[RMDB]
Description: Conditions: 150 mM KOAc, 10 mM MgCl2 and 150 mM bicine (pH 8.5), 24 C. The record gives the reactivity of an RNA of 177 nucleotides to 2A3 and DMS. 2A3 adducts were read by reverse transcription with SuperScript II with manganese. For DMS the reverse transcriptase was MarathonRT. High DMS reactivity at an A or C suggests that its Watson-Crick edge is free.
RNA sequence: GGGAACGACUCGAGUAGAGUCGAAAAAUCGUGGUGCUGUUCGUACCCGCCGCCCUGCCGUGGUACUACUCCUGGCCGCUGGCGGUCGCUGCCCCGUUGGCCCAGGCACGACGGGCGAUCGCGGCCAAUCGUGCAUCCCAUUCGUGGGAUGCACGAUAAAAGAAACAACAACAACAAC
Reactivity to 2A3 in 0.01 (KOAc 150mM, MgCl2 10mM, bicine 150mM(pH8.5), 24C), signal-to-noise 2, nucleotides 027 to 126: a000u110c050g030u130g040g020u020g000c020u040g080u130u080c050g020u020a060c010c010c000g040c030c000g000c010c000c000u010g000c030c010g040u050g040g020u130a170c020u070a090c020u050c020c010u020g050g000c040c020g000c040u050g050g000c050g010g050u020c020g000c030u070g010c000c010c010c030g010u020u030g080g000c000c080c130a210g070g020c060a050c090g010a010c000g010g000g000c020g000a050u140c100g000c020g010g000c000c000a020
Reactivity to DMS in 0.01 (KOAc 150mM, MgCl2 10mM, bicine 150mM(pH8.5), 24C), signal-to-noise 2, nucleotides 027 to 126: a060u000c070g020u010g020g020u000g000c030u010g000u010u010c130g010u020a050c050c020c020g000c110c030g010c030c010c030u010g030c080c020g010u000g010g020u000a070c100u000a090c120u010c040c080u000g020g010c040c070g010c050u010g010g000c020g010g010u000c020g000c070u010g010c210c090c010c020g000u000u000g060g000c010c020c100a140g010g020c020a020c000g020a020c030g010g020g020c050g010a020u000c130g020c040g030g000c030c060a090